This 177-nucleotide RNA was probed chemically with DMS and 2A3.
2A3 adducts were read by reverse transcription with SuperScript II with manganese.
The DMS profile rests on 1,066 reads.
The reactions ran in a buffer of 150 mM KOAc, 10 mM MgCl2 and 150 mM bicine (pH 8.5), at 24 C.
Source: RMDB library OK2TRN, as collected in RNAgym.
[RMDB]
RNA sequence: GGGAACGACUCGAGUAGAGUCGAAAACACUCACAGAGACACUGUCUGUGUCUCAGACAGUCUGACAGUGACACACAGUGAGACUCUCUCUCUGUCAGUCAGUGACUGACAGACACAGAGUGAGACAAACAUCGUGUUCCUUCGGGAACACGAUGUUAAAAGAAACAACAACAACAAC
Reactivity to DMS in 0.01 (KOAc 150mM, MgCl2 10mM, bicine 150mM(pH8.5), 24C), signal-to-noise 2, nucleotides 027 to 126: c160a300c010u000c010a020c010a070g010a260g000a100c010a040c010u000g000u000c010u000g000u000g000u000c010u000c150a030g000a040c050a020g000u020c110u000g000a050c030a010g020u000g010a210c300a050c080a040c300a110g040u000g000a030g020a260c010u000c010u000c000u000c190u000c000u000g010u000c000a000g000u000c000a120g020u000g030a010c000u030g000a020c000a000g000a060c080a100c300a030g010a070g010u000g000a180g020a150c230a090
Reactivity to 2A3 in 0.01 (KOAc 150mM, MgCl2 10mM, bicine 150mM(pH8.5), 24C), signal-to-noise 1, nucleotides 027 to 126: c010a000c010u040c010a010c010a030g070a010g080a000c010a000c020u020g010u070c020u050g100u010g050u030c020u030c040a020g000a010c040a040g170u100c100u030g010a010c000a020g030u020g010a030c000a020c000a010c000a080g010u020g030a010g030a050c010u000c000u000c010u010c000u030c000u020g000u020c000a010g010u000c020a100g220u040g280a010c010u030g000a010c000a020g010a020c030a010c000a010g050a000g000u010g000a010g000a010c090a010